Overview:
Source: RMDB library TTRDEL, as collected in RNAgym. Structure probing data (2A3 and DMS) for a 177-nucleotide construct. The reactions ran in a buffer of 150 mM KOAc, 10 mM MgCl2 and 150 mM bicine (pH 8.5), at 24 C. For 2A3 the reverse transcriptase was SuperScript II with manganese. For DMS, 3,979 sequencing reads were counted.
RNA sequence: GGGAACGACUCGAGUAGAGUCGAAAAGAUAUGGAGGCUGAAGAGCGCCAGGGCGACCGUCGGAAACGACAAACCCUGGAACUACGCUCCAGCCUCCUAAGUCAAAAGACGUACUUCGGUACGUCAACAUCAUACAGGGGUUCGCCCCUGUAUGAUGAAAAGAAACAACAACAACAAC
Reactivity to 2A3 in 0.01 (KOAc 150mM, MgCl2 10mM, bicine 150mM(pH8.5), 24C), signal-to-noise 3, nucleotides 027 to 126: g010a000u020a030u130g000g000a000g000g000c010u010g070a290a090g000a190g040c030g010c010c000a000g020g000g000c060g080a120c180c050g080u000c000g020g020a060a030a020c010g020a000c000a020a100a110c010c000c010u000g000g000a000a020c010u120a020c010g000c010u000c000c000a010g000c000c000u000c000c000u000a010a000g000u010c000a000a000a030a120g010a000c000g000u000a000c010u030u090c250g110g020u000a000c000g000u000c000a000a000
Reactivity to DMS in 0.01 (KOAc 150mM, MgCl2 10mM, bicine 150mM(pH8.5), 24C), signal-to-noise 4, nucleotides 027 to 126: g010a030u000a300u010g020g020a010g020g010c000u010g000a120a130g010a000g010c010g020c000c000a000g010g010g010c010g010a240c300c300g000u000c000g010g010a080a050a150c000g010a020c010a060a170a120c010c000c000u010g000g000a040a020c150u010a280c030g000c000u000c010c000a010g000c000c000u000c000c000u000a000a050g020u010c020a110a080a100a060g000a000c000g000u000a000c010u000u010c200g030g010u000a000c000g020u000c010a040a080